[RMDB]
Background:
Chemical mapping of a 207-nucleotide RNA with 2A3.

RNA sequence: GGGAACGACUCGAGUAGAGUCGAAAACGGUAAGAUUCGUCUUACCGAAAAAAACCUUUGUGCCUAGACAUGAUCCACAACAUACUCAUCCCAUUGGGAUGUGUGAAGAUCAACAGCUAGGCACUCUGGUAAAAAGCGCCGAGUUCGCUCGGCGCAACCAACUAUGCUUGUUCGCAAGCAUAGUUGGAAAAGAAACAACAACAACAAC
Reactivity to 2A3 in 0.01 (KOAc 150mM, MgCl2 10mM, bicine 150mM(pH8.5), 24C), signal-to-noise 3, nucleotides 027 to 156: c000g010g000u000a010a010g000a020u080u140c200g030u030c100u010u050a010c010c000g000a040a000a000a000a000a000a000c000c000u000u010u000g010u010g010c000c000u010a010g020a100c040a130u060g010a020u040c010c010a030c040a210a130c010a180u240a230c070u040c040a010u080c060c080c030a290u120u280g000g000g000a000u000g000u010g000u000g040a130a050g010a000u000c000a030a070c050a080g020c000u000a000g000g000c000a000c000u020c000u000g000g000u050a070a060a070a060a030g000c010g000c000c040g000a000g020u080u170c170g070c160u010c010g000g010c000g020c000a000a000
Values cover nucleotides 27 to 156. The 2A3 profile rests on 1,995 reads.